Source information
This 177-nucleotide RNA was probed chemically with 2A3 and DMS. Reactivities are given for positions 27 through 126. It was measured as part of the RMDB library TTRDES. 2A3 adducts were read by reverse transcription with SuperScript II with manganese. The reactions ran in a buffer of 150 mM KOAc, 10 mM MgCl2 and 150 mM bicine (pH 8.5), at 24 C. The DMS profile rests on 9,113 reads.
[RMDB]
RNA sequence: GGGAACGACUCGAGUAGAGUCGAAAAGAUAUGGAUGGUACCAGGGAGCGAAUGGUCGGAAACGACCAUGUCGCGAAGAACUGGGCCAUCCUAAGUCAAAACCAGUCUACGUUCGCGUAGACUGGAACAAGAGUAAUAGCUUCGGCUAUUACUCUUGAAAAGAAACAACAACAACAAC
Reactivity to 2A3 in 0.01 (KOAc 150mM, MgCl2 10mM, bicine 150mM(pH8.5), 24C), signal-to-noise 5, nucleotides 027 to 126: g010a010u020a000u050g000g010a000u010g040g100u280a300c010c020a020g020g040g050a300g010c000g000a010a000u010g000g000u010c000g000g000a020a020a010c010g010a000c040c030a000u040g130u000c000g000c020g060a060a050g050a000a010c000u000g000g000g020c000c000a000u000c000c000u000a020a000g000u000c000a000a020a080a190c010c000a010g000u000c000u000a010c000g040u040u090c300g010c000g180u000a000g000a000c000u010g000g010a000a020
Reactivity to DMS in 0.01 (KOAc 150mM, MgCl2 10mM, bicine 150mM(pH8.5), 24C), signal-to-noise 5, nucleotides 027 to 126: g020a010u000a040u020g010g000a010u000g010g010u000a120c000c000a010g010g020g000a100g030c000g000a130a010u000g000g010u000c000g020g010a010a010a040c010g020a010c010c000a000u000g010u000c010g030c000g030a110a110g000a200a300c000u000g010g000g000c000c010a000u000c000c000u000a000a050g000u000c020a120a090a190a200c000c000a010g010u000c000u000a010c000g010u010u020c280g030c010g020u000a000g000a010c000u000g010g000a030a090